[RMDB]
RNA sequence: GGGAACGACUCGAGUAGAGUCGAAAAAGAUAUGGACUCGUAAAGCUUCGAGGAUCUACAGGGAGUACCUAUAUCGGAAACGAUAUAGGGAAAUCCGUAGGGAGAAGCGAUUGCGAGUCCUAAGUCAGAUACUAGCAUUCUUCGGAAUGCUAGUAUCAAAAGAAACAACAACAACAAC
Reactivity to DMS in 0.01 (KOAc 150mM, MgCl2 10mM, bicine 150mM(pH8.5), 24C), signal-to-noise 3, nucleotides 027 to 126: a110g010a040u000a300u000g000g010a000c000u000c000g010u000a020a090a250g000c000u000u000c000g010a110g040g000a020u020c000u010a010c010a070g010g010g010a090g010u000a140c010c010u000a000u000a000u000c000g000g000a150a080a240c000g010a010u000a000u000a010g000g000g000a060a120a110u010c000c010g010u000a020g000g000g000a050g000a020a010g000c000g010a060u000u000g010c000g000a020g000u000c000c000u000a010a040g000u000c050a160
Reactivity to 2A3 in 0.01 (KOAc 150mM, MgCl2 10mM, bicine 150mM(pH8.5), 24C), signal-to-noise 2, nucleotides 027 to 126: a010g050a010u050a000u110g020g010a010c010u000c010g030u020a020a000a050g020c010u030u000c030g100a300g040g000a010u000c010u010a010c060a120g020g040g000a060g020u030a010c000c000u000a000u010a000u010c010g000g020a020a050a020c020g000a000u000a000u020a000g030g000g000a000a010a000u030c010c000g000u010a000g000g010g000a020g000a000a010g000c010g020a020u050u210g000c000g000a000g000u020c000c000u010a000a000g000u000c000a010
This 177-nucleotide RNA was probed chemically with DMS and 2A3.
The data come from the RNA Mapping Database (RMDB), library TTRDES.
Conditions: 150 mM KOAc, 10 mM MgCl2 and 150 mM bicine (pH 8.5), 24 C.
The 2A3 profile rests on 8,291 reads.
The DMS profile rests on 4,077 reads.